Structure probing data (2A3 and DMS) for a 177-nucleotide construct.
For 2A3 the reverse transcriptase was SuperScript II with manganese.
RNA sequence: GGGAACGACUCGAGUAGAGUCGAAAACAGUGAUGGAAACAUCACUGAAAAACGUGACAGCGCAUCACGAAAAAGUCGAUCGAAUACCGAUCGACAAGCGCUAAAGUCAUGCCGAAAGGCAUGACAAAAUCGACGUGGAUUUCGAUCCACGUCGAUUAAAAGAAACAACAACAACAAC
Reactivity to 2A3 in 0.01 (KOAc 150mM, MgCl2 10mM, bicine 150mM(pH8.5), 24C), signal-to-noise 2, nucleotides 027 to 126: c010a000g000u000g000a000u000g000g010a010a040a030c000a000u000c000a000c000u010g000a030a000a000a000a000c000g000u000g000a010c010a030g000c000g000c010a000u000c000a000c100g260a030a030a000a000a000g000u010c000g000a010u010c020g000a040a080u160a300c130c000g020a010u000c000g000a000c000a000a000g000c000g000c000u010a050a010a000g000u000c000a000u000g000c000c000g070a050a010a000g000g000c000a000u000g000a000c000a000a070
Reactivity to DMS in 0.01 (KOAc 150mM, MgCl2 10mM, bicine 150mM(pH8.5), 24C), signal-to-noise 2, nucleotides 027 to 126: c000a020g020u020g060a030u000g020g030a210a150a140c000a010u000c000a030c000u000g010a030a020a040a130a300c020g000u000g000a010c070a030g000c060g050c000a300u000c000a010c080g000a030a040a000a000a000g010u000c000g000a040u000c000g020a220a200u050a120c240c000g040a000u000c000g030a000c040a040a030g030c000g040c000u000a090a070a090g000u010c000a000u000g010c000c000g000a060a090a160g010g000c000a000u000g000a000c000a000a050
High DMS reactivity at an A or C suggests that its Watson-Crick edge is free. The RNA was probed in 150 mM KOAc, 10 mM MgCl2 and 150 mM bicine (pH 8.5) at 24 C.